[RMDB]
RNA sequence: GGGAACGACUCGAGUAGAGUCGAAAAGAUAUGGAGCCGUCACUGGCGAAGAACUAAAUCGGAAACGAUUUAGGGAGCCACUGACCGGCUCCUAAGUCAAACGAAUCCGUGUUCGCACGGAUUCGAAGGUUAAACACAUGUUCGCAUGUGUUUAACCAAAAGAAACAACAACAACAAC
Reactivity to DMS in 0.01 (KOAc 150mM, MgCl2 10mM, bicine 150mM(pH8.5), 24C), signal-to-noise 3, nucleotides 027 to 126: g000a050u020a300u000g010g000a030g020c000c000g040u000c010a010c190u010g010g010c000g000a070a200g000a140a300c000u000a000a000a010u000c010g020g000a210a150a240c000g000a010u000u000u010a000g000g020g010a020g000c020c000a010c170u000g000a010c180c130g090g000c010u000c000c010u010a000a080g000u000c050a120a100a210c020g000a010a000u000c000c000g040u000g010u000u030c250g010c000a000c000g000g010a030u000u000c000g020a050a030
Reactivity to 2A3 in 0.01 (KOAc 150mM, MgCl2 10mM, bicine 150mM(pH8.5), 24C), signal-to-noise 1, nucleotides 027 to 126: g020a000u050a030u150g010g000a010g040c000c000g000u000c010a040c090u020g000g000c030g180a120a000g000a000a010c010u020a000a000a000u010c000g030g000a070a040a030c000g000a000u000u000u020a020g000g000g000a010g010c010c000a010c040u020g030a090c090c170g030g060c000u000c000c000u000a000a010g010u000c020a030a030a090c020g010a010a000u000c000c000g050u000g030u080u070c290g020c110a000c010g000g040a000u000u010c000g000a030a060